Conditions: 150 mM KOAc, 10 mM MgCl2 and 150 mM bicine (pH 8.5), 24 C. The record gives the reactivity of an RNA of 177 nucleotides to 2A3 and DMS. For 2A3, 5,690 sequencing reads were counted. For DMS the reverse transcriptase was MarathonRT. Reactivities are rounded to 0.1 and cut off at 0 and 3.
RNA sequence: GGGAACGACUCGAGUAGAGUCGAAAAGUGCCAGUGGCAGAGCAGAGCUGAGCUGCUCCAGUGGUAGUGGUGGUGGCGAAGCCAGUGUCGUCGCCGGAGCUUAUAACGAGCGUAGUUCUUGCGCAGAACUAAAUGGAUCCUUCGGGAUCCAUUUAGUAAAAGAAACAACAACAACAAC
Reactivity to 2A3 in 0.01 (KOAc 150mM, MgCl2 10mM, bicine 150mM(pH8.5), 24C), signal-to-noise 6, nucleotides 027 to 126: g110u070g040c010c000a040g040u030g040g010c060a040g010a010g030c000a000g020a010g080c050u100g040a030g030c010u020g010c010u020c010c000a070g040u080g060g050u110a090g050u060g110g050u080g010g020u020g020g010c010g020a020a000g030c050c080a070g050u080g040u100c040g000u000c000g000c010c000g020g010a020g010c010u130u120a120u090a220a080c110g020a030g050c010g000u030a030g050u050u010c030u050u040g000c030g000c040a030g070a070
Reactivity to DMS in 0.01 (KOAc 150mM, MgCl2 10mM, bicine 150mM(pH8.5), 24C), signal-to-noise 4, nucleotides 027 to 126: g010u040g000c000c010a050g020u010g000g010c300a030g030a090g000c010a040g020a120g020c070u000g000a210g000c010u000g000c000u000c000c020a080g010u010g010g030u010a060g010u010g010g020u010g000g030u000g000g000c010g000a090a060g020c080c030a150g000u030g000u000c020g010u000c010g020c020c010g020g000a220g000c010u000u000a060u020a090a080c120g000a070g000c040g000u020a090g000u010u000c060u010u000g010c030g000c060a090g000a100